Source: RMDB library OK1LIB, as collected in RNAgym. Structure probing data (DMS and 2A3) for a 177-nucleotide construct.
[RMDB]
RNA sequence: GGGAACGACUCGAGUAGAGUCGAAAACUACUGGGACGGAACAGCUUUGAGGUGCGUGUUUGUGCCUGUCCUGGGAGAGACCGGCGCACAGAGGAAGAGAAUCUCCGCAAGAAAGGGGAGCCUCACCCUGAAUAAUCAUGUUCGCAUGAUUAUUCAGAAAAGAAACAACAACAACAAC
Reactivity to DMS in 0.01 (KOAc 150mM, MgCl2 10mM, bicine 150mM(pH8.5), 24C), signal-to-noise 9, nucleotides 027 to 126: c030u010a050c040u000g010g000g000a030c030g000g010a130a070c100a080g000c080u020u010u020g010a090g010g020u010g010c050g020u020g020u010u020u010g010u020g010c040c020u020g020u010c020c030u000g000g010g010a110g020a110g000a100c040c050g000g000c030g000c050a050c100a080g010a110g000g010a130a070g000a070g010a100a150u010c030u000c020c010g010c160a160a120g010a070a090a150g010g010g010g000a050g000c190c010u000c020a100c090c040
Reactivity to 2A3 in 0.01 (KOAc 150mM, MgCl2 10mM, bicine 150mM(pH8.5), 24C), signal-to-noise 9, nucleotides 027 to 126: c030u080a030c020u030g010g010g040a020c040g040g030a090a030c020a040g060c040u110u110u180g070a050g020g050u070g030c060g030u100g070u050u140u080g040u040g020c000c000u020g010u010c010c010u030g020g070g000a040g000a000g010a020c000c030g010g000c010g000c010a040c030a050g050a030g040g040a090a090g040a020g030a110a040u020c010u000c020c000g040c090a080a070g090a160a100a030g010g010g010g000a010g010c010c000u010c010a050c010c000

The 2A3 profile rests on 46,339 reads.